[RMDB]
This 177-nucleotide RNA was probed chemically with 2A3 and DMS.
DMS adducts were read by reverse transcription with MarathonRT.
The data come from the RNA Mapping Database (RMDB), library OK2TST.
Conditions: 150 mM KOAc, 10 mM MgCl2 and 150 mM bicine (pH 8.5), 24 C.
For 2A3, 2,509 sequencing reads were counted.

RNA sequence: GGGAACGACUCGAGUAGAGUCGAAAAGGGUCAUAUGUCCCUGUGUUUAAUGCAAAUGGGGAUUUUGCCCCCGAGCCACCAUUAUCGUUUACUGGUCACAAGGGUGGACAAGAAGGGCUGCGUCAGAAAAAUGAAGCAGAUUCGUCUGCUUCAUUUUAAAAGAAACAACAACAACAAC
Reactivity to 2A3 in 0.01 (KOAc 150mM, MgCl2 10mM, bicine 150mM(pH8.5), 24C), signal-to-noise 3, nucleotides 027 to 126: g010g000g030u050c040a040u060a030u300g040u010c020c030c050u030g020u010g030u020u260u090a270a110u200g020c040a060a090a180u160g010g020g000g000a000u080u050u040u090g030c020c020c000c000c000g010a030g020c000c000a020c030c010a040u040u100a090u190c010g020u000u020u100a080c040u060g040g060u100c060a030c030a210a070g080g000g030u040g000g000a020c020a000a030g110a030a060g050g010g000c050u050g000c000g070u070c030a050g140a080
Reactivity to DMS in 0.01 (KOAc 150mM, MgCl2 10mM, bicine 150mM(pH8.5), 24C), signal-to-noise 8, nucleotides 027 to 126: g010g000g010u000c030a050u000a040u010g010u000c000c000c010u000g000u000g010u000u000u010a130a110u010g000c100a050a110a070u000g010g010g010g010a050u000u000u000u010g000c090c010c000c010c050g000a130g000c020c030a050c030c020a090u010u000a070u000c120g000u000u000u000a090c090u000g000g010u000c120a070c140a080a120g010g010g010u000g010g000a050c070a040a090g010a120a110g000g010g020c040u000g020c100g010u000c060a100g000a040